Structure probing data (2A3 and DMS) for a 177-nucleotide construct.
Values cover nucleotides 27 to 126.
The reactions ran in a buffer of 150 mM KOAc, 10 mM MgCl2 and 150 mM bicine (pH 8.5), at 24 C.
For 2A3 the reverse transcriptase was SuperScript II with manganese.

[RMDB]
RNA sequence: GGGAACGACUCGAGUAGAGUCGAAAAGUUCUUGUCAUGUAGGGAUUGAAUCCAUAGGAUCUCCACUUUGAACUGCACAGUAGGCAGCCUCCUUGGGGUCUGCAUUUUGCCACGGGGGACACUGAGACAAGCCAAUUAGCUUCGGCUAAUUGGCUUGAAAAGAAACAACAACAACAAC
Reactivity to 2A3 in 0.01 (KOAc 150mM, MgCl2 10mM, bicine 150mM(pH8.5), 24C), signal-to-noise 2, nucleotides 027 to 126: g000u040u020c040u050u060g040u060c020a140u130g010u030a050g010g110g100a110u050u050g040a050a100u140c070c080a100u040a030g050g070a040u000c070u040c020c000a000c040u210u090u130g060a060a040c000u130g000c050a040c050a140g100u130a070g060g000c050a040g000c000c010u020c020c020u060u130g010g010g030g000u040c050u050g060c040a060u020u010u030u130g030c000c010a000c000g000g000g000g050g020a000c020a040c100u040g050a030g000a040
Reactivity to DMS in 0.01 (KOAc 150mM, MgCl2 10mM, bicine 150mM(pH8.5), 24C), signal-to-noise 2, nucleotides 027 to 126: g010u000u000c040u000u010g000u010c090a030u050g040u050a020g010g010g020a030u020u020g030a070a150u030c040c030a110u010a140g000g020a040u000c030u000c000c030a070c050u000u000u010g030a140a110c060u000g020c080a080c090a090g000u000a060g030g000c050a020g010c010c020u010c050c150u010u030g000g000g000g010u030c010u030g030c010a060u000u010u000u010g010c000c030a060c080g000g000g030g000g000a070c070a080c030u050g020a120g020a230